[RMDB]
RNA sequence: GGGAACGACUCGAGUAGAGUCGAAAAGGCCCAGAUGAGUGAUGGGAUCCAGAGGUGAGGGGGGGAAUGGACACAGGGACCUACCUCUGGUGGGAGUGGGUGUGAAAUUCCCAUGCUUGUUGCUUCCAGUGUGGAAGCCCACUUCACAUCCCUCCUGCAUCUAUGUAUCUUUCGAGAUACAUAGAUGAAAAGAAACAACAACAACAAC
Reactivity to 2A3 in 0.01 (KOAc 150mM, MgCl2 10mM, bicine 150mM(pH8.5), 24C), signal-to-noise 2, nucleotides 027 to 156: g080g000c010c010c010a030g050a120u150g030a040g090u140g050a040u080g000g010g020a030u070c030c030a030g000a010g080g000u100g120a110g000g030g010g010g020g010g010a000a080u160g110g040a040c020a010c010a090g000g000g040a000c000c010u010a020c000c010u010c000u000g020g000u010g000g030g010a030g030u290g000g020g020u000g010u020g000a060a040a030u160u070c050c000c010a000u080g010c010u100u100g010u040u120g040c000u090u020c010c000a150g050u140g050u070g300g000a000a020g000c000c020c000a060c030u010u000c000a010c010a010u010c000c000c000u000c000c010u030g010
Reactivity to DMS in 0.01 (KOAc 150mM, MgCl2 10mM, bicine 150mM(pH8.5), 24C), signal-to-noise 1, nucleotides 027 to 156: g030g010c000c000c000a200g060a150u000g010a140g040u000g020a140u010g000g000g000a120u020c040c030a060g010a050g020g020u000g030a100g000g010g030g010g020g030g000a100a050u010g010g010a150c110a100c040a120g030g020g000a080c000c010u000a050c000c000u000c030u010g060g030u020g000g010g000a050g000u030g030g070g060u000g000u000g040a020a010a170u000u010c050c030c000a130u000g020c110u010u020g000u000u000g000c020u000u000c020c050a300g010u010g000u020g000g000a010a060g020c060c040c020a030c090u000u000c040a050c000a030u000c000c000c010u000c000c010u020g000
Structure probing data (2A3 and DMS) for a 207-nucleotide construct. Conditions: 150 mM KOAc, 10 mM MgCl2 and 150 mM bicine (pH 8.5), 24 C. The DMS profile rests on 3,010 reads.